RNA sequence: GGGAACGACUCGAGUAGAGUCGAAAAUGUCACUGGUGCCAUGUCAUGGCGCAUGAAUCCUUCGAGGAUGAUGAUGUUGCAGCGGUGAUGAACGCAUUUUUCAUCAAUGUGAAGGUGGAUCGCGAGACGUACUGGUGAGUUUCGACUCACCAGUACGAAAAGAAACAACAACAACAAC
Reactivity to 2A3 in 0.01 (KOAc 150mM, MgCl2 10mM, bicine 150mM(pH8.5), 24C), signal-to-noise 3, nucleotides 027 to 126: u160g040u030c010a000c040u040g140g040u000g090c050c040a030u030g020u060c010a040u070g130g010c100g000c070a030u100g030a040a050u030c030c020u010u100c160g060a140g020g020a020u050g000a010u010g010a000u040g000u050u030g000c020a050g040c000g020g030u050g040a080u070g070a100a020c050g010c040a010u030u060u020u060u030c010a050u040c020a030a110u250g040u080g090a090a040g040g000u020g020g010a030u020c020g000c020g040a040g010a020
Reactivity to DMS in 0.01 (KOAc 150mM, MgCl2 10mM, bicine 150mM(pH8.5), 24C), signal-to-noise 4, nucleotides 027 to 126: u000g010u000c030a040c060u010g020g020u000g010c010c070a050u010g010u000c060a060u010g010g000c100g040c100a070u000g010a170a080u010c000c010u000u020c190g000a150g000g000a020u000g010a030u000g010a020u000g020u000u010g020c050a060g010c030g000g000u000g010a030u010g010a090a150c110g000c040a050u000u000u010u000u000c040a040u000c050a090a110u000g010u000g010a100a100g000g020u000g000g000a030u010c140g000c050g010a130g010a210
An RNA of 177 nucleotides, treated with 2A3 and DMS and read out base by base. The 2A3 profile rests on 3,246 reads. The RNA was probed in 150 mM KOAc, 10 mM MgCl2 and 150 mM bicine (pH 8.5) at 24 C. It was measured as part of the RMDB library OK2TRN.